[RMDB]
RNA sequence: GGGAACGACUCGAGUAGAGUCGAAAAGAUAUGGAGAAUUCCGUAUUGAGAAGCCCAAGUCGGAAACGACUUGGCUUCAAUGAUGUACGGAGAUUCUCCUAAGUCAAAAGGAUGCUUCGGCAUCCAAGAAUAUGGAAACGUUCGCGUUUCCAUAUUCAAAAGAAACAACAACAACAAC
Reactivity to 2A3 in 0.01 (KOAc 150mM, MgCl2 10mM, bicine 150mM(pH8.5), 24C), signal-to-noise 3, nucleotides 027 to 126: g010a020u070a050u170g020g000a000g000a010a020u020u000c010c000g000u010a010u030u140g080a100g000a010a010g020c100c120c070a000a010g010u000c000g000g080a090a060a160c000g000a000c000u000u000g010g000c000u000u000c000a020a300u120g020a010u080g000u030a000c020g000g010a100g020a060u000u020c000u000c000c000u000a070a010g030u000c030a030a020a070a220g010g000a000u010g000c000u090u150c300g170g000c000a000u000c010c000a000a010
Reactivity to DMS in 0.01 (KOAc 150mM, MgCl2 10mM, bicine 150mM(pH8.5), 24C), signal-to-noise 4, nucleotides 027 to 126: g010a030u010a300u010g010g010a010g010a030a020u000u000c000c000g010u010a020u000u000g000a250g010a010a000g000c190c050c100a010a000g010u000c010g010g000a110a080a270c010g010a000c000u000u000g010g010c000u010u010c010a110a130u000g000a090u000g010u000a000c000g000g000a020g000a030u000u000c000u000c000c000u000a010a090g000u000c050a100a100a190a110g010g000a020u000g010c010u000u020c200g030g000c000a010u010c000c020a040a050